An RNA of 207 nucleotides, treated with 2A3 and read out base by base. For 2A3 the reverse transcriptase was SuperScript II with manganese. Conditions: 150 mM KOAc, 10 mM MgCl2 and 150 mM bicine (pH 8.5), 24 C. Source: RMDB library OK3TST, as collected in RNAgym.
RNA sequence: GGGAACGACUCGAGUAGAGUCGAAAAGGGAUAAGAGAGUACUCUUAUCCCCACGUCGUUGGUGACAACGACGAUUAUCCGGUGGCCACCGGCCCGGGCCACCGUUACUCCACUCCACUCCUUCGGGACUGGUUUGGAGGAACAUAACCGGGCAAAAGAUAUAGUCCAGGUUCGCCUGGACUAUAUCAAAAGAAACAACAACAACAAC
Reactivity to 2A3 in 0.01 (KOAc 150mM, MgCl2 10mM, bicine 150mM(pH8.5), 24C), signal-to-noise 1, nucleotides 027 to 156: g030g000g000a000u000a020a000g010a000g020a050g210u210a250c000u000c000u000u000a000u000c000c000c000c000a040c020g000u000c000g010u020u000g040g050u040g030a030c000a010a000c000g010a000c000g000a030u150u090a070u130c040c000g020g000u000g000g010c050c010a040c140c090g100g050c020c010c010g010g000g010c000c000a000c000c000g000u000u080a020c000u010c000c000a000c010u000c000c000a010c010u010c000c000u010u080c250g070g000g000a000c000u000g010g000u010u000u000g000g000a000g000g010a010a010c040a030u160a050a080c040c030g000g000g000c000a030a010a080a000